[RMDB]
RNA sequence: GGGAACGACUCGAGUAGAGUCGAAAACAUGAGCAGUUUCGACUGCUCAUGAAAAAAGCGUACUACACUUAAUUCGAACUACGAGUCGGAUCCCAAAUAGGAUCCGCUCGCGUUAUAAGUGUAUCGCAAAAAACAGGUGUGGUUCGCCACACCUGAAGCGAAUACAUUUGUUCGCAAAUGUAUUCGCAAAAGAAACAACAACAACAAC
Reactivity to 2A3 in 0.01 (KOAc 150mM, MgCl2 10mM, bicine 150mM(pH8.5), 24C), signal-to-noise 1, nucleotides 027 to 156: c000a000u010g000a000g000c000a000g030u060u170u300c300g160a000c040u040g020c000u030c000a000u000g000a030a000a000a000a000a000g110c100g000u190a140c070u000a000c040a010c010u000u020a030a090u300u070c050g080a170a000c050u110a130c290g130a000g040u240c000g150g000a000u000c040c020c020a070a040a060u160a000g000g000a020u000c000c040g000c000u000c000g000c010g000u010u120a120u030a120a040g010u020g000u000a040u290c070g000c000a000a240a000a000a000a000c000a000g000g000u000g010u000g000g050u110u100c090g000c070c000a000c000a000c000c000u000g000a040a010